[RMDB]
Record summary
An RNA of 177 nucleotides, treated with DMS and 2A3 and read out base by base. For 2A3 the reverse transcriptase was SuperScript II with manganese. Reactivities are given for positions 27 through 126.

RNA sequence: GGGAACGACUCGAGUAGAGUCGAAAACAUGCCAGAUGAUAAGGAAAUGGUUUUGGAUUAGUUAGGACCUAUAAUAUAGAAACUAAAUAAGAUGAUAGACUUACAAGGAUAUACAUUUCCUGUAAAAUAUUACCUCAUACUUCGGUAUGAGGUAAUAAAAAGAAACAACAACAACAAC
Reactivity to DMS in 0.01 (KOAc 150mM, MgCl2 10mM, bicine 150mM(pH8.5), 24C), signal-to-noise 3, nucleotides 027 to 126: c080a110u010g030c040c020a180g000a080u010g020a160u010a120a060g000g000a060a050a040u010g000g010u000u000u000u010g020g000a270u000u000a030g000u000u000a020g000g020a150c220c020u000a040u030a070a060u010a300u000a040g000a060a040a150c010u010a020a020a110u010a020a060g000a140u010g000a050u000a080g000a170c060u000u000a070c180a070a110g000g000a110u000a020u010a050c040a020u000u000u000c010c000u000g010u000a050a060a100a080
Reactivity to 2A3 in 0.01 (KOAc 150mM, MgCl2 10mM, bicine 150mM(pH8.5), 24C), signal-to-noise 1, nucleotides 027 to 126: c030a000u230g130c000c000a070g150a300u180g020a000u050a200a070g040g040a060a020a000u030g060g000u070u040u200u060g040g000a020u060u030a040g070u050u070a040g000g030a040c040c000u030a010u060a300a130u260a040u000a110g080a030a180a020c010u000a050a040a110u000a070a060g010a040u120g010a030u080a040g010a050c010u010u050a010c080a030a030g040g000a010u040a050u050a080c050a050u000u000u000c000c020u040g030u070a120a140a020a020

The reactions ran in a buffer of 150 mM KOAc, 10 mM MgCl2 and 150 mM bicine (pH 8.5), at 24 C.